RNA sequence: GGGAACGACUCGAGUAGAGUCGAAAAGAGUCAUCGAAGCCUCAACAUCCGUGAAACACAGCGCUAUCAAGUCCGACCAAUAUUUCAAUUACGUGAACACACCAGCAGUCGGAGAACUUCCAGAAGACUUCAACAAGUACAACACUAACGAUACAUAGCGAAACCUAAUAUUCGUAUUAGGUUUCGCAAAAGAAACAACAACAACAAC
Reactivity to DMS in 0.01 (KOAc 150mM, MgCl2 10mM, bicine 150mM(pH8.5), 24C), signal-to-noise 2, nucleotides 027 to 156: g000a180g050u010c040a100u000c030g020a150a110g020c010c020u000c030a050a090c060a110u000c040c030g010u000g000a080a080a070c070a120c020a090g030c000g010c010u020a090u010c040a080a100g010u000c010c000g010a150c000c020a100a130u000a090u010u000u020c050a120a100u030u000a030c050g020u000g000a060a040c040a070c050a040c080c010a000g050c030a040g020u000c050g010g020a130g000a040a080c060u000u000c010c040a010g000a040a050g000a100c020u020u010c010a030a070c080a020a050g040u000a090c030a070a100c010a210c000u020a030a050c040g040a180u030a050c070a070u000a220
Reactivity to 2A3 in 0.01 (KOAc 150mM, MgCl2 10mM, bicine 150mM(pH8.5), 24C), signal-to-noise 4, nucleotides 027 to 156: g020a010g020u050c010a020u060c080g030a060a010g020c000c020u100c060a050a060c010a080u050c000c050g030u010g120a030a060a060c060a020c040a030g030c020g000c050u050a080u150c060a080a040g060u050c010c010g030a020c040c020a090a030u080a110u080u120u100c070a090a100u210u080a070c080g060u060g070a090a010c050a010c000a030c080c010a000g010c020a020g030u010c020g010g000a010g000a020a030c020u060u030c010c030a010g010a110a020g020a070c010u050u020c120a050a030c010a060a010g070u070a060c010a110a020c040a070c100u120a110a010c050g010a020u120a110c040a050u170a050

Chemical mapping of a 207-nucleotide RNA with DMS and 2A3. For DMS, 2,053 sequencing reads were counted. It was measured as part of the RMDB library OK3TST. The RNA was probed in 150 mM KOAc, 10 mM MgCl2 and 150 mM bicine (pH 8.5) at 24 C.